[RMDB]
RNA sequence: GGGAACGACUCGAGUAGAGUCGAAAAGUCUAGCGAAAGGAUCCCACCCGGGAUACACGCAAGUCGCGAAUUAGGCCGACCGGCCAAGGUCAAUCGCAGAACUCAACUGCAUGAGUAAGCUAGACGACGAUUAUCGUCACUUCGGUGACGAUAAUCGAAAAGAAACAACAACAACAAC
Reactivity to DMS in 0.01 (KOAc 150mM, MgCl2 10mM, bicine 150mM(pH8.5), 24C), signal-to-noise 2, nucleotides 027 to 126: g000u000c000u010a010g000c000g010a110a080a170g040g000a060u000c000c000c000a170c300c100c200g060g000g000a010u030a010c000a090c160g000c150a040a100g020u000c100g000c000g000a050a070u000u000a140g030g000c000c000g000a120c110c130g010g020c000c080a010a110g000g010u000c090a020a060u020c030g000c000a130g000a060a030c070u000c120a100a100c100u000g020c120a180u010g000a090g030u000a050a260g000c000u000a000g000a070c020g000a130
Reactivity to 2A3 in 0.01 (KOAc 150mM, MgCl2 10mM, bicine 150mM(pH8.5), 24C), signal-to-noise 2, nucleotides 027 to 126: g020u050c000u000a000g020c000g080a140a000a010g120g010a030u030c030c020c000a050c040c070c020g000g030g030a010u050a170c060a010c030g030c030a020a120g110u110c020g000c030g010a060a130u150u050a170g030g000c040c020g070a120c050c100g010g050c020c030a050a030g050g000u080c030a010a010u070c020g000c010a030g030a060a020c040u010c120a070a090c060u070g020c020a040u040g030a020g090u000a020a020g000c000u000a020g000a010c000g010a000
An RNA of 177 nucleotides, treated with DMS and 2A3 and read out base by base.
DMS (dimethyl sulfate) methylates the pairing face of unpaired adenines and cytosines.
For DMS, 976 sequencing reads were counted.
For 2A3 the reverse transcriptase was SuperScript II with manganese.
The RNA was probed in 150 mM KOAc, 10 mM MgCl2 and 150 mM bicine (pH 8.5) at 24 C.